Structure probing data (DMS and 2A3) for a 177-nucleotide construct. It was measured as part of the RMDB library OK1LIB. For DMS the reverse transcriptase was MarathonRT. The RNA was probed in 150 mM KOAc, 10 mM MgCl2 and 150 mM bicine (pH 8.5) at 24 C.
[RMDB]
RNA sequence: GGGAACGACUCGAGUAGAGUCGAAAAGUUGUACAAGGGAAAGAGGAAACGCCAGCCUCAUUCUUAGAAAGAUUAAAAGAGGCUUACAGAAUGUACACUCCCUAUGACCCUGAGGACCCAGGGCAGGCAAUCAGCACUAUUUCGAUAGUGCUGAUUGAAAAGAAACAACAACAACAAC
Reactivity to DMS in 0.01 (KOAc 150mM, MgCl2 10mM, bicine 150mM(pH8.5), 24C), signal-to-noise 8, nucleotides 027 to 126: g000u030u010g010u000a030c020a070a120g000g010g010a050a060a060g020a130g010g010a080a080a090c160g010c070c090a070g010c000c010u010c010a110u020u010c030u010u000a140g010a110a150a060g000a030u010u020a070a060a130a110g010a030g000g010c000u000u030a100c180a120g000a110a080u010g010u010a010c030a030c050u000c020c010c000u020a090u020g000a130c010c010c010u000g010a130g000g010a100c150c060c000a020g010g000g000c030a020g000g000
Reactivity to 2A3 in 0.01 (KOAc 150mM, MgCl2 10mM, bicine 150mM(pH8.5), 24C), signal-to-noise 5, nucleotides 027 to 126: g070u070u020g010u010a020c040a070a090g090g040g060a080a280a050g190a080g040g100a080a140a040c070g030c030c020a010g000c000c000u000c010a070u070u010c030u030u060a080g190a140a150a010g020a060u130u220a050a080a060a050g010a020g000g000c000u000u020a020c020a050g120a100a060u070g010u010a000c010a000c020u020c000c000c010u040a130u150g150a280c000c000c000u040g020a120g070g100a060c000c050c000a010g010g000g000c000a010g070g020